RNA sequence: GGGAACGACUCGAGUAGAGUCGAAAAGAUAUGGAUGGAGAGUAGGGAGAAACUUCUCGGAAACGAGAAGAAUUUCGAGGAUCUAUGGUCAUCCUAAGUCAAACUUCAUCUCUUCGGAGAUGAAGAACGUCAGUCUUUAGUUCGCUAAAGACUGACGAAAAGAAACAACAACAACAAC
Reactivity to DMS in 0.01 (KOAc 150mM, MgCl2 10mM, bicine 150mM(pH8.5), 24C), signal-to-noise 1, nucleotides 027 to 126: g000a020u000a010u000g000g030a020u000g000g000a210g010a290g010u000a010g010g030g010a040g000a040a030a080c010u010u000c020u010c010g000g010a040a010a030c010g010a000g000a000a000g000a090a150u000u010u000c000g010a100g020g000a020u010c000u000a000u000g020g030u020c000a020u000c010c000u000a010a140g000u000c000a130a070a190c010u000u000c000a000u000c000u010c000u000u000c300g000g000a030g000a000u000g000a000a020g010a050a140
Reactivity to 2A3 in 0.01 (KOAc 150mM, MgCl2 10mM, bicine 150mM(pH8.5), 24C), signal-to-noise 1, nucleotides 027 to 126: g020a010u020a030u100g020g010a000u020g030g070a220g000a060g300u060a020g030g020g000a050g000a000a000a010c020u000u020c010u000c000g020g050a000a020a000c020g000a010g000a000a010g030a070a160u000u020u010c020g010a230g000g030a010u020c000u000a010u060g120g090u200c020a010u000c010c000u010a000a010g000u020c000a080a090a200c000u000u010c010a020u000c010u000c000u090u080c300g150g000a010g000a000u020g020a000a020g030a060a020
Chemical mapping of a 177-nucleotide RNA with DMS and 2A3. The DMS profile rests on 1,439 reads. The RNA was probed in 150 mM KOAc, 10 mM MgCl2 and 150 mM bicine (pH 8.5) at 24 C. For DMS the reverse transcriptase was MarathonRT. The 2A3 profile rests on 2,429 reads. For 2A3 the reverse transcriptase was SuperScript II with manganese. Source: RMDB library TTRDES, as collected in RNAgym.